[RMDB]
RNA sequence: GGGAACGACUCGAGUAGAGUCGAAAAGAUAUGGAGCCAUGCACAUGGAGGAUAUGUCGGAAACGACAUAUUGAAGUGUGAACUACACGGCUCCUAAGUCAAACGAACACUGUUCGCAGUGUUCGAAGCAGCAAUGUUAGUUCGCUAACAUUGCUGCAAAAGAAACAACAACAACAAC
Reactivity to 2A3 in 0.01 (KOAc 150mM, MgCl2 10mM, bicine 150mM(pH8.5), 24C), signal-to-noise 2, nucleotides 027 to 126: g030a000u070a040u160g000g010a000g020c030c000a020u060g010c010a010c010a050u040g020g010a060g150g040a030u000a000u020g000u000c000g000g010a050a030a050c010g020a000c000a000u000a000u000u080g030a020a030g000u000g000u000g010a010a020c030u100a040c050a000c050g000g000c000u000c000c000u010a060a000g020u010c070a120a030a080c040g000a000a010c000a000c020u050g060u150u160c300g020c140a010g020u000g020u010u000c000g000a010a020
Reactivity to DMS in 0.01 (KOAc 150mM, MgCl2 10mM, bicine 150mM(pH8.5), 24C), signal-to-noise 2, nucleotides 027 to 126: g000a050u010a300u000g000g030a000g010c000c000a060u000g050c010a030c020a000u000g020g030a200g000g000a010u000a010u000g000u000c000g000g020a130a040a150c010g010a010c010a000u000a000u000u000g010a300a180g040u000g000u010g010a060a030c110u020a280c010a010c030g010g000c000u000c000c000u000a000a030g010u000c040a110a070a170c010g010a010a010c010a010c000u000g000u000u000c220g040c000a000g000u000g000u000u000c000g000a020a030

Annotation
This 177-nucleotide RNA was probed chemically with 2A3 and DMS. Conditions: 150 mM KOAc, 10 mM MgCl2 and 150 mM bicine (pH 8.5), 24 C. 2A3 adducts were read by reverse transcription with SuperScript II with manganese. The DMS profile rests on 1,013 reads. It was measured as part of the RMDB library TTRDEL.